[RMDB]
RNA sequence: GGGAACGACUCGAGUAGAGUCGAAAAAAGUUUCAAACUUUUAUGCAAUCUCAUCUAGGUUUGGUACUCCUGAAGACUUAAAAAACCUCAUAAACACUGCUCAUUCAAUGGGGAUUGCUGUUUUAUUCAUAAUGCUCAUCUUCGGAUGAGCAUUAUGAAAAGAAACAACAACAACAAC
Reactivity to 2A3 in 0.01 (KOAc 150mM, MgCl2 10mM, bicine 150mM(pH8.5), 24C), signal-to-noise 2, nucleotides 027 to 126: a000a000g090u120u110u070c130a160a100a050c040u010u040u010u030a050u140g020c050a180a090u070c020u020c040a120u070c060u100a090g040g030u010u030u000g050g010u030a040c000u040c030c020u050g030a070a010g110a130c120u200u190a100a000a000a000a000a050c030c000u020c020a100u120a060a120a000c060a030c120u080g010c040u050c020a090u290u020c060a040a110u170g000g000g040g030a070u040u040g000c030u000g000u000u000u000u020a050u020u010

Conditions: 150 mM KOAc, 10 mM MgCl2 and 150 mM bicine (pH 8.5), 24 C.
Chemical mapping of a 177-nucleotide RNA with 2A3.
For 2A3, 720 sequencing reads were counted.